Source: RMDB library OK3TST, as collected in RNAgym. This 207-nucleotide RNA was probed chemically with 2A3. Values are in units of 0.01, from 0 to 300, in steps of 10. The RNA was probed in 150 mM KOAc, 10 mM MgCl2 and 150 mM bicine (pH 8.5) at 24 C.

RNA sequence: GGGAACGACUCGAGUAGAGUCGAAAACAACGCACACACGUAAAUAAAACAGACAUCGGCUGUUUAACAAACACACACAUGUGUAUAUCAAAAAAGGGACAAAGCAAAGCGAAGAAUAUCAGCCUUUGGUUCUUCUUUCCUUUGCACAUGUGCCUGACCCGCACUGAUUAUUCGUAAUCAGUGCGGGAAAAGAAACAACAACAACAAC
Reactivity to 2A3 in 0.01 (KOAc 150mM, MgCl2 10mM, bicine 150mM(pH8.5), 24C), signal-to-noise 2, nucleotides 027 to 156: c020a010a060c010g080c030a040c000a000c010a010c120g080u070a080a060a120u110a040a070a100a000c050a010g140a030c010a130u190c140g090g010c060u020g010u010u010u060a070a020c070a070a130a000c060a000c010a000c000a000c010a100u040g050u000g020u010a040u030a020u290c130a030a150a050a000a000a010g050g020g010a020c030a030a070a010g010c010a060a000a000g040c050g080a040a040g030a060a020u130a080u160c070a030g110c050c010u060u120u070g100g000u090u000c040u070u020c000u040u090u000c010c000u020u000u000g000c010a040c030a060u010g000u010g070c000c010u050g010a060